Structure probing data (DMS and 2A3) for a 177-nucleotide construct.

RNA sequence: GGGAACGACUCGAGUAGAGUCGAAAAGAUAUGGAUGCCGGGAGAAGUGUAUCGGAAACGAUAUUAUCUUCAUCGAUCGUUCGCAUCCUAAGUCAAAGAACACAUACUCUUCGGAGUAUGUGUUCAAGAAACCUAAUAUGUUCGCAUAUUAGGUUUCAAAAGAAACAACAACAACAAC
Reactivity to DMS in 0.01 (KOAc 150mM, MgCl2 10mM, bicine 150mM(pH8.5), 24C), signal-to-noise 8, nucleotides 027 to 126: g010a030u000a200u010g000g010a010u000g010c020c030g000g010g000a030g010a020a020g010u000g000u000a010u000c000g010g010a070a050a120c000g000a010u000a000u010u000a070u010c000u000u000c010a300u010c150g010a070u010c020g000u040u020c300g010c010a010u000c000c000u000a030a110g010u000c030a080a120a150g000a010a000c000a010c000a000u000a000c000u000c000u000u010c180g010g000a020g010u000a000u000g010u000g000u000u000c000a040a080
Reactivity to 2A3 in 0.01 (KOAc 150mM, MgCl2 10mM, bicine 150mM(pH8.5), 24C), signal-to-noise 7, nucleotides 027 to 126: g010a010u030a010u070g000g000a000u000g030c030c010g020g010g010a060g000a020a020g010u010g000u050a000u010c000g000g030a040a020a000c010g000a000u010a010u080u150a070u130c020u030u020c020a130u300c030g030a040u040c030g070u300u300c140g000c000a000u000c010c000u010a050a000g020u020c040a130a050a140g010a010a000c000a000c000a000u010a010c000u010c010u070u160c300g030g000a000g000u000a000u000g000u000g010u000u000c000a000a000
Values cover nucleotides 27 to 126. 2A3 is a SHAPE reagent: it acylates the 2'-hydroxyl of flexible nucleotides of all four kinds. The reactions ran in a buffer of 150 mM KOAc, 10 mM MgCl2 and 150 mM bicine (pH 8.5), at 24 C.